[RMDB]
RNA sequence: GGGAACGACUCGAGUAGAGUCGAAAAGAUAUGGAACGAUACAGCGGUAAUUCUUGUGAAUCGGAAACGAUUCCAAGUGCCAGCUGAUCGUUCCUAAGUCAAAGGACUUACGUUCGCGUAAGUCCAAGAUCAGUUCUAUGUUCGCAUAGAACUGAUCAAAAGAAACAACAACAACAAC
Reactivity to DMS in 0.01 (KOAc 150mM, MgCl2 10mM, bicine 150mM(pH8.5), 24C), signal-to-noise 7, nucleotides 027 to 126: g010a050u000a300u000g000g000a010a010c000g010a010u000a110c010a010g030c010g020g000u010a040a190u020u000c010u010u000g000u020g010a020a010u010c000g010g000a100a080a220c010g020a010u000u000c000c000a000a010g010u000g000c040c030a110g030c000u000g010a060u000c000g010u000u000c000c000u010a010a090g010u010c050a100a150a190g000g000a020c000u000u000a000c000g010u010u010c300g030c010g020u000a000a010g000u000c000c000a040a050
Reactivity to 2A3 in 0.01 (KOAc 150mM, MgCl2 10mM, bicine 150mM(pH8.5), 24C), signal-to-noise 9, nucleotides 027 to 126: g010a000u060a040u170g000g010a000a010c010g010a020u300a290c020a000g000c010g020g050u130a260a300u300u060c010u030u100g120u240g090a000a000u000c010g020g030a060a040a050c010g000a000u000u000c000c000a010a000g010u020g050c060c050a060g000c010u010g000a000u000c000g000u000u000c000c000u000a010a010g000u010c020a020a060a230g000g000a000c000u000u000a000c010g080u030u120c300g000c000g150u000a000a000g000u000c000c020a000a000
Source: RMDB library TTRDES, as collected in RNAgym. An RNA of 177 nucleotides, treated with DMS and 2A3 and read out base by base. DMS adducts were read by reverse transcription with MarathonRT. For DMS, 13,463 sequencing reads were counted. Conditions: 150 mM KOAc, 10 mM MgCl2 and 150 mM bicine (pH 8.5), 24 C. The 2A3 profile rests on 41,885 reads.